[RMDB]
RNA sequence: GGGAACGACUCGAGUAGAGUCGAAAACGUUCGCCUGCUCAUGACUCGGUACAGGCAUCGCAAUACCGCCUGCAUGGGCUGAAUGCUUAUUUUGAAAAGCAAAACGCAGCGGAUCUGGCGUAUUCGAUGCCAUUAAUCCCUUCGGGGAUUAAUGGCAAAAAGAAACAACAACAACAAC
Reactivity to 2A3 in 0.01 (KOAc 150mM, MgCl2 10mM, bicine 150mM(pH8.5), 24C), signal-to-noise 1, nucleotides 027 to 126: c090g050u010u040c010g060c010c010u010g000c020u010c010a060u050g010a080c080u050c100g050g040u070a060c010a010g000g080c040a040u040c030g000c000a000a040u030a070c070c040g040c020c010u050g050c020a030u050g050g060g000c000u020g060a090a010u030g030c020u050u040a120u070u180u050u130g160a270a220a000a000g000c010a000a000a000a090c140g010c040a030g030c030g070g030a010u030c010u020g020g080c060g000u010a050u000u040c000g040a010
Reactivity to DMS in 0.01 (KOAc 150mM, MgCl2 10mM, bicine 150mM(pH8.5), 24C), signal-to-noise 2, nucleotides 027 to 126: c100g000u000u000c060g050c020c000u000g000c010u000c010a050u010g010a130c100u010c000g020g020u020a090c120a130g000g000c010a050u000c080g000c230a000a040u000a040c070c120g010c050c020u000g000c110a030u000g010g020g020c000u000g010a100a160u000g030c010u000u010a110u000u000u020u000g010a060a080a020a080g020c010a050a040a150a150c250g010c050a040g010c000g000g010a090u000c020u000g010g000c040g010u000a020u000u000c020g010a090
This 177-nucleotide RNA was probed chemically with 2A3 and DMS. The DMS profile rests on 1,116 reads. The RNA was probed in 150 mM KOAc, 10 mM MgCl2 and 150 mM bicine (pH 8.5) at 24 C.